[RMDB]
RNA sequence: GGGAACGACUCGAGUAGAGUCGAAAAGAAGUGUCGUGGCAGUCGCGUGAUCGUACAUCCACGGGCAGCGGUAGUACCUCGUUCGGCGGGGAGUACGGUCGGGAGACUAGGCGCGCUUGCCGGUGGGCCGCGUUUGUAGGUUCGCCUACGAACGCGGAAAAGAAACAACAACAACAAC
Reactivity to 2A3 in 0.01 (KOAc 150mM, MgCl2 10mM, bicine 150mM(pH8.5), 24C), signal-to-noise 7, nucleotides 027 to 126: g100a060a020g040u050g120u280c040g010u030g060g170c040a020g010u030c020g070c180g240u060g010a040u020c010g000u020a020c010a140u030c000c010a020c010g010g000g010c040a050g020c020g040g000u030a060g050u130a150c020c010u050c030g020u050u040c040g060g070c080g020g060g010g000a040g020u020a010c000g030g010u000c000g010g070g000a120g000a010c010u030a110g080g020c020g000c010g000c010u010u070g030c000c000g050g030u070g010g030g000
Reactivity to DMS in 0.01 (KOAc 150mM, MgCl2 10mM, bicine 150mM(pH8.5), 24C), signal-to-noise 4, nucleotides 027 to 126: g010a110a020g000u000g040u030c020g040u000g000g020c050a060g010u010c030g020c120g020u000g000a010u010c030g000u010a020c040a080u000c020c000a030c030g020g010g050c010a070g040c150g010g000u020a070g020u080a300c030c020u010c060g010u000u000c060g010g000c100g000g020g000g000a080g020u000a030c010g020g030u000c020g020g040g000a140g020a010c030u000a100g000g010c020g020c070g030c000u000u030g030c010c010g000g000u000g020g020g000
Annotation:
Structure probing data (2A3 and DMS) for a 177-nucleotide construct. It was measured as part of the RMDB library OK1LIB. DMS (dimethyl sulfate) methylates the pairing face of unpaired adenines and cytosines. The RNA was probed in 150 mM KOAc, 10 mM MgCl2 and 150 mM bicine (pH 8.5) at 24 C. Reactivities are given for positions 27 through 126. For 2A3, 7,870 sequencing reads were counted.